[RMDB]
RNA sequence: GGGAACGACUCGAGUAGAGUCGAAAAAUCGGUGUCUUCCGCUAUGCCUAUUUUCAUGAUACCUGCAGUAAUAGUUUGUUUAGCAGGAUAUUACUUCGGCUUGUUGUAUACUAGGGCACAGGUUGGAUCGGCACCAUUUAUUCGUAAAUGGUGCCGAAAAAGAAACAACAACAACAAC
Reactivity to DMS in 0.01 (KOAc 150mM, MgCl2 10mM, bicine 150mM(pH8.5), 24C), signal-to-noise 1, nucleotides 027 to 126: a090u000c060g020g010u010g010u000c030u000u000c050c010g020c040u000a080u000g010c010c010u000a110u000u010u000u000c110a070u000g010a070u000a040c300c020u020g010c050a070g030u000a010a010u010a100g010u000u010u000g020u000u000u000a160g010c010a020g000g000a020u000a000u010u000a030c130u010u000c050g020g010c120u000u000g000u000u000g030u000a080u000a120c200u010a080g030g010g000c020a090c080a010g020g000u000u020g020g000a110
Structure probing data (DMS) for a 177-nucleotide construct. It was measured as part of the RMDB library OK2TRN. Values are in units of 0.01, from 0 to 300, in steps of 10. Conditions: 150 mM KOAc, 10 mM MgCl2 and 150 mM bicine (pH 8.5), 24 C. The DMS profile rests on 1,120 reads.